This 177-nucleotide RNA was probed chemically with 2A3 and DMS. 2A3 adducts were read by reverse transcription with SuperScript II with manganese. For 2A3, 3,465 sequencing reads were counted. For DMS the reverse transcriptase was MarathonRT. The reactions ran in a buffer of 150 mM KOAc, 10 mM MgCl2 and 150 mM bicine (pH 8.5), at 24 C.

RNA sequence: GGGAACGACUCGAGUAGAGUCGAAAAUGGCGCUGGCCCACGAGGUGCGGAUGCGCUGGUGCGGACCCGAGGUCGAGGUCGAAGGCAUCAUCAGCCUGAAAACCGGUGGCUGCCCGGAGGAUUGCCAUGAGUCUAAUUGUUUCGACAAUUAGACUCAAAAAGAAACAACAACAACAAC
Reactivity to 2A3 in 0.01 (KOAc 150mM, MgCl2 10mM, bicine 150mM(pH8.5), 24C), signal-to-noise 2, nucleotides 027 to 126: u050g030g010c030g010c050u060g030g030c020c040c020a010c050g090a140g050g020u110g020c040g060g040a060u140g030c020g000c040u020g020g000u060g010c100g060g020a090c000c000c010g000a050g030g060u100c030g040a120g030g010u010c020g030a090a020g040g000c000a020u040c000a030u050c020a070g000c000c000u010g000a030a070a010a020c000c010g040g020u060g020g000c030u060g010c030c020c020g030g010a060g040g000a100u060u160g010c010c030a050
Reactivity to DMS in 0.01 (KOAc 150mM, MgCl2 10mM, bicine 150mM(pH8.5), 24C), signal-to-noise 6, nucleotides 027 to 126: u000g010g020c030g030c060u000g020g020c020c020c020a120c110g000a140g010g030u010g020c040g010g010a120u010g020c110g010c020u010g010g030u010g020c060g020g000a100c050c020c040g000a210g010g000u010c040g000a150g000g000u000c030g000a210a050g000g000c020a070u000c170a070u010c160a080g000c010c020u000g000a140a060a130a050c030c010g020g020u000g000g010c070u010g000c040c030c040g020g000a100g000g000a120u000u010g010c020c040a120